[RMDB]
RNA sequence: GGGAACGACUCGAGUAGAGUCGAAAAUGUUUGCCUGGGACCCCGGCCUCAGAAGGGUGGAUGAUGAAUAAGACAUGUUACCCAGGUGCAGUCCCGUGGGCGUGGAAUUGGUGCGGACGUGCAGCUGCAGUGUCGGAACGUUCGCGUUCCGACACUGAAAAGAAACAACAACAACAAC
Reactivity to DMS in 0.01 (KOAc 150mM, MgCl2 10mM, bicine 150mM(pH8.5), 24C), signal-to-noise 1, nucleotides 027 to 126: u000g010u000u000u010g030c000c020u020g010g000g000a170c060c020c050c100g000g010c060c020u000c100a140g000a150a130g010g020g050u020g010g020a080u010g010a140u000g000a080a140u010a120a080g010a100c030a030u010g020u010u000a080c030c000c000a050g000g000u010g010c060a070g000u010c010c000c040g010u020g000g010g000c050g000u000g010g010a060a080u010u000g010g000u000g020c040g000g010a080c070g020u000g020c100a100g000c060u010g000